Chemical mapping of a 207-nucleotide RNA with DMS and 2A3. DMS adducts were read by reverse transcription with MarathonRT.

[RMDB]
RNA sequence: GGGAACGACUCGAGUAGAGUCGAAAAAUAGACUACAAAUCGGUUAACACAGAGAACUAAAAUUGUGGAGCUACUGAAUGAACCAGCUAUGGAAUUGUCUGUGUGUGGGCAUUCAGAUGGACAUACCGGAUAAAAUUCUGGACUGGUAAGAGUGUGACCAUAGGCGAUGAUUCGUCAUCGCCUAUGGAAAAGAAACAACAACAACAAC
Reactivity to DMS in 0.01 (KOAc 150mM, MgCl2 10mM, bicine 150mM(pH8.5), 24C), signal-to-noise 1, nucleotides 027 to 156: a080u000a110g000a300c020u000a100c030a050a100a040u000c110g000g000u000u000a070a130c070a150c120a130g010a150g020a030a180c030u000a020a030a030a160u000u010g010u000g020g010a110g000c000u020a070c030u030g020a060a030u000g000a070a100c010c000a020g000c030u000a110u020g000g000a000a070u000u000g010u000c000u000g030u000g070u010g120u030g000g030g080c020a040u000u040c130a170g010a120u000g000g000a010c000a070u000a030c000c000g000g000a020u000a040a080a050a270u000u000c000u000g030g000a020c060u000g000g030u010a050a090g020a120g010u000g000u000g010a230
Reactivity to 2A3 in 0.01 (KOAc 150mM, MgCl2 10mM, bicine 150mM(pH8.5), 24C), signal-to-noise 2, nucleotides 027 to 156: a000u060a010g060a030c010u080a060c120a040a110a060u080c030g010g060u090u100a200a020c020a000c010a060g120a050g050a180a020c080u110a180a100a050a110u130u060g000u030g010g030a050g080c050u090a050c010u030g090a020a110u060g010a020a020c000c010a020g000c010u070a050u230g050g020a050a050u060u070g040u040c000u000g100u010g030u010g000u050g120g020g060c000a010u040u050c000a110g070a230u060g020g010a000c000a010u010a000c010c000g000g000a000u070a060a190a030a020u020u000c000u060g090g040a190c010u010g000g010u030a050a060g090a060g030u110g000u040g060a030
Annotation: It was measured as part of the RMDB library OK3TST. Conditions: 150 mM KOAc, 10 mM MgCl2 and 150 mM bicine (pH 8.5), 24 C. For 2A3, 891 sequencing reads were counted. 2A3 adducts were read by reverse transcription with SuperScript II with manganese.